[RMDB]
RNA sequence: GGGAACGACUCGAGUAGAGUCGAAAACGCAUGCGAAAGCAUGCGGCUAUGCUAAUGCAUGGCGACCGCGAUCAGGUAGAGCAGGCGGCGAUAGUGGUUAUUAUUCCGCUAUCGAUUACCAGUGUCUGUUAUUAUUCAGAUACAUGGACCUCUACGAAUGAUAUAUGACUUUCGAGUCAUAUAUCAUAAAAGAAACAACAACAACAAC
Reactivity to DMS in 0.01 (KOAc 150mM, MgCl2 10mM, bicine 150mM(pH8.5), 24C), signal-to-noise 6, nucleotides 027 to 156: c010g020c010a010u020g010c000g000a190a130a280g010c000a000u000g010c010g020g010c030u000a030u010g010c010u000a110a170u010g020c010a020u000g020g010c000g010a120c020c020g010c070g010a190u000c100a140g000g010u000a000g000a050g030c070a120g010g030c050g010g010c050g010a010u000a010g030u000g000g010u000u010a150u000u000a300u010u010c000c000g030c010u000a010u000c010g020a100u000u000a030c020c010a210g010u000g020u000c000u010g010u000u000a140u000u000a200u000u000c010a010g010a030u000a000c020a100u000g020g000a160c120c010u000c000u000a030c020g000a150
Reactivity to 2A3 in 0.01 (KOAc 150mM, MgCl2 10mM, bicine 150mM(pH8.5), 24C), signal-to-noise 5, nucleotides 027 to 156: c010g000c000a000u000g000c000g050a080a010a020g000c000a000u000g000c000g000g010c000u000a000u000g000c040u210a300a090u300g000c000a000u010g010g010c020g050a080c000c000g000c020g030a090u150c100a080g140g010u010a000g000a010g010c180a110g150g000c000g000g000c000g000a000u000a000g010u020g040g050u070u070a120u210u060a150u250u080c000c000g000c000u000a000u000c000g000a010u020u070a040c000c000a000g000u000g010u000c000u010g100u060u050a220u210u070a150u120u120c000a000g000a000u010a010c040a100u010g010g020a080c000c000u000c000u000a000c010g020a020

Chemical mapping of a 207-nucleotide RNA with DMS and 2A3. The 2A3 profile rests on 11,420 reads. The data come from the RNA Mapping Database (RMDB), library OK3TST. Conditions: 150 mM KOAc, 10 mM MgCl2 and 150 mM bicine (pH 8.5), 24 C. Values are in units of 0.01, from 0 to 300, in steps of 10. For DMS the reverse transcriptase was MarathonRT. For DMS, 18,082 sequencing reads were counted.